[RMDB]
RNA sequence: GGGAACGACUCGAGUAGAGUCGAAAAUCAGGUCACUUCGGUGACCUGAAAACUAGGAACCAAAAGGAAAACCUAACCAAGGAAUAUGGAAACCAAAAUAAAAAACCAUAGCCUUCGGGCUAUGGAAGUAACCACUAUAGUUCGCUAUAGUGGUUACAAAAGAAACAACAACAACAAC
Reactivity to 2A3 in 0.01 (KOAc 150mM, MgCl2 10mM, bicine 150mM(pH8.5), 24C), signal-to-noise 3, nucleotides 027 to 126: u020c000a000g000g000u000c000a010c010u020u100c160g130g000u000g010a000c000c000u020g010a000a000a000a000c050u040a020g040g050a010a080c020c000a090a180a060a190g040g010a090a060a030a020c000c020u020a030a010c030c020a060a040g070g030a120a090u140a070u230g020g070a100a030a080c030c010a060a080a060a030u210a080a190a040a010a030a010c000c000a000u000a000g010c000c010u010u100c290g080g000g000c000u000a000u010g000g000a000a000
Reactivity to DMS in 0.01 (KOAc 150mM, MgCl2 10mM, bicine 150mM(pH8.5), 24C), signal-to-noise 2, nucleotides 027 to 126: u000c010a010g000g020u000c000a000c000u000u000c240g040g010u020g040a010c000c000u020g000a020a020a080a130c120u000a080g000g000a130a110c020c030a050a060a110a070g020g020a060a060a110a100c010c010u010a020a150c050c050a050a070g000g020a090a100u010a090u030g020g000a110a050a090c050c050a000a030a080a080u030a030a070a080a090a060a110c000c000a010u000a010g000c000c000u000u010c240g030g030g010c000u010a000u000g010g000a030a050

An RNA of 177 nucleotides, treated with 2A3 and DMS and read out base by base. DMS adducts were read by reverse transcription with MarathonRT. For DMS, 1,245 sequencing reads were counted. Reactivities are given for positions 27 through 126. The 2A3 profile rests on 3,259 reads.